An RNA of 177 nucleotides, treated with 2A3 and DMS and read out base by base.
For DMS the reverse transcriptase was MarathonRT.
Values cover nucleotides 27 to 126.
For 2A3 the reverse transcriptase was SuperScript II with manganese.

[RMDB]
RNA sequence: GGGAACGACUCGAGUAGAGUCGAAAAAUGGGUAAAUCACACGGUUACAGAUCUCGUACUCGUUACAUGUUCCAACGUGACUUCAGAAAGCAUGGUGCCGUCCAUCUUUCUACUUACUUGAAGGUCAUACGGAUGACGAGUUCGCUCGUCAUCCGUAAAAAGAAACAACAACAACAAC
Reactivity to 2A3 in 0.01 (KOAc 150mM, MgCl2 10mM, bicine 150mM(pH8.5), 24C), signal-to-noise 2, nucleotides 027 to 126: a010u070g000g050g060u060a060a100a060u090c000a010c010a010c190g010g020u000u070a070c050a070g060a090u130c030u040c140g060u020a010c020u000c000g020u010u090a060c100a240u170g000u000u040c000c000a040a030c030g070u080g010a010c000u040u000c050a020g010a020a000a000g000c060a030u000g000g080u090g220c020c010g070u060c020c000a020u030c000u030u010u000c000u030a040c040u050u090a030c050u050u140g060a060a000g000g040u030c010a010
Reactivity to DMS in 0.01 (KOAc 150mM, MgCl2 10mM, bicine 150mM(pH8.5), 24C), signal-to-noise 2, nucleotides 027 to 126: a120u010g000g000g000u000a010a070a110u000c070a090c120a000c020g000g010u000u030a090c140a130g000a020u000c070u010c080g050u000a020c040u000c030g010u000u050a090c170a050u000g040u000u000c000c000a040a080c200g010u010g000a300c000u000u050c080a040g030a020a020a000g030c190a000u000g000g010u020g000c210c220g000u000c030c020a010u000c000u000u000u000c010u000a060c130u000u000a040c090u010u000g020a080a100g000g000u000c000a110